[RMDB]
RNA sequence: GGGAACGACUCGAGUAGAGUCGAAAAGAGUUCCUUCUGGACCAGGCCGCGAAACUGGGCAGUGGCGUUCAUCUCGACGACCAUCGCCUCGUCGACACUCUCGAGGAACUCCGUCAUCUCGGCCUCGCCUAUCCGUAGUCUUCGGACUACGGAUAGGAAAAGAAACAACAACAACAAC
Reactivity to DMS in 0.01 (KOAc 150mM, MgCl2 10mM, bicine 150mM(pH8.5), 24C), signal-to-noise 4, nucleotides 027 to 126: g000a090g000u000u000c010c020u020u040c110u020g000g000a070c050c050a050g000g010c040c010g030c100g040a090a040a090c110u010g000g000g030c030a050g030u010g010g000c000g000u000u050c130a120u070c090u040c100g000a050c000g010a100c010c010a070u010c040g020c010c010u000c100g000u010c020g000a040c070a050c040u020c020u030c130g000a000g000g010a070a050c010u000c000c020g010u020c100a060u050c020u010c020g010g000c040c030u040c050g010
Reactivity to 2A3 in 0.01 (KOAc 150mM, MgCl2 10mM, bicine 150mM(pH8.5), 24C), signal-to-noise 9, nucleotides 027 to 126: g060a000g020u030u040c010c000u070u090c090u150g040g030a070c030c000a040g040g060c040c010g040c060g060a110a070a040c050u040g000g020g000c010a030g020u010g010g000c020g040u120u110c070a200u080c130u100c110g040a030c030g180a250c020c010a060u070c050g000c020c010u030c030g070u040c020g040a020c020a030c040u060c000u030c020g010a010g020g030a020a020c020u010c030c000g070u080c030a120u010c010u010c020g070g010c040c010u020c030g010
Chemical mapping of a 177-nucleotide RNA with DMS and 2A3. The RNA was probed in 150 mM KOAc, 10 mM MgCl2 and 150 mM bicine (pH 8.5) at 24 C. Source: RMDB library OK1LIB, as collected in RNAgym. 2A3 adducts were read by reverse transcription with SuperScript II with manganese. High DMS reactivity at an A or C suggests that its Watson-Crick edge is free. For DMS the reverse transcriptase was MarathonRT.